This 177-nucleotide RNA was probed chemically with DMS and 2A3. DMS (dimethyl sulfate) methylates the pairing face of unpaired adenines and cytosines. The RNA was probed in 150 mM KOAc, 10 mM MgCl2 and 150 mM bicine (pH 8.5) at 24 C.
RNA sequence: GGGAACGACUCGAGUAGAGUCGAAAAGAAGAGAGUCGACGCAAGCGACGAUAACUGCGGAACGGUAACCGUAGUACCGUACGGUCAUGGCACGCGAAAGCGAAAGACCGAACCAUGCCAUAAGAGAGGCUGAUUAAUCAUUCGUGAUUAAUCAGCCAAAAGAAACAACAACAACAAC
Reactivity to DMS in 0.01 (KOAc 150mM, MgCl2 10mM, bicine 150mM(pH8.5), 24C), signal-to-noise 2, nucleotides 027 to 126: g010a190a030g040a090g030a250g010u030c050g030a180c040g000c210a040a130g010c010g000a030c030g000a120u010a080a150c000u000g000c010g010g000a050a050c020g000g030u020a050a160c020c010g000u000a050g000u000a040c010c020g030u000a250c070g000g030u000c060a090u040g030g000c040a150c010g000c010g000a110a140a070g000c010g000a060a030a150g010a100c000c040g000a020a200c040c010a010u000g000c020c040a020u000a070a070g000a200g000a170
Reactivity to 2A3 in 0.01 (KOAc 150mM, MgCl2 10mM, bicine 150mM(pH8.5), 24C), signal-to-noise 3, nucleotides 027 to 126: g140a010a060g090a010g030a000g010u000c020g000a130c030g000c130a050a040g000c000g020a040c000g000a000u030a080a070c030u070g010c000g050g010a060a050c010g120g000u150a160a010c000c000g030u060a020g060u000a000c010c000g000u050a030c040g010g000u010c020a010u030g080g000c030a050c020g050c000g040a070a000a010g000c030g050a100a020a030g060a030c020c060g000a030a020c020c000a020u040g050c020c020a090u110a150a060g060a010g070a010